[RMDB]
Notes:
This 177-nucleotide RNA was probed chemically with 2A3 and DMS. 2A3 adducts were read by reverse transcription with SuperScript II with manganese. Source: RMDB library OK2TRN, as collected in RNAgym. The DMS profile rests on 37,636 reads. The RNA was probed in 150 mM KOAc, 10 mM MgCl2 and 150 mM bicine (pH 8.5) at 24 C.

RNA sequence: GGGAACGACUCGAGUAGAGUCGAAAACGCAGGCGCAGGUCGUUGCAGAGGUCCGCGUCGACCCGGUGGGCCAGGUGCGCGGCCAGCGCCUGGCAGCCCAGCCAGGCCAGCACCGCCAGCAGCACCACGUGAUUAAUAUAUUCGUAUAUUAAUCACGAAAAGAAACAACAACAACAAC
Reactivity to 2A3 in 0.01 (KOAc 150mM, MgCl2 10mM, bicine 150mM(pH8.5), 24C), signal-to-noise 8, nucleotides 027 to 126: c060g010c020a010g010g000c010g000c030a020g000g030u020c020g040u140u300g000c010a010g060a050g070g010u010c010c000g040c030g050u090c090g200a260c020c020c010g070g040u040g010g010g010c020c010a090g160g180u030g000c010g000c000g000g000c010c000a010g010c000g000c010c000u000g000g000c000a020g010c000c010c000a010g020c020c010a020g040g010c010c020a020g010c020a030c030c030g020c020c000a020g010c010a010g020c010a040c030c020a050
Reactivity to DMS in 0.01 (KOAc 150mM, MgCl2 10mM, bicine 150mM(pH8.5), 24C), signal-to-noise 2, nucleotides 027 to 126: c160g010c030a040g010g010c000g020c010a060g020g010u000c010g010u000u010g040c010a060g010a300g000g010u000c000c010g010c010g010u000c190g000a140c040c030c020g000g010u000g000g010g010c000c000a050g020g020u000g010c010g000c010g000g000c000c000a040g010c010g000c000c000u000g000g010c020a100g000c010c010c010a130g010c050c060a070g010g010c030c030a070g010c040a060c060c030g000c030c030a060g010c030a060g010c060a090c050c070a210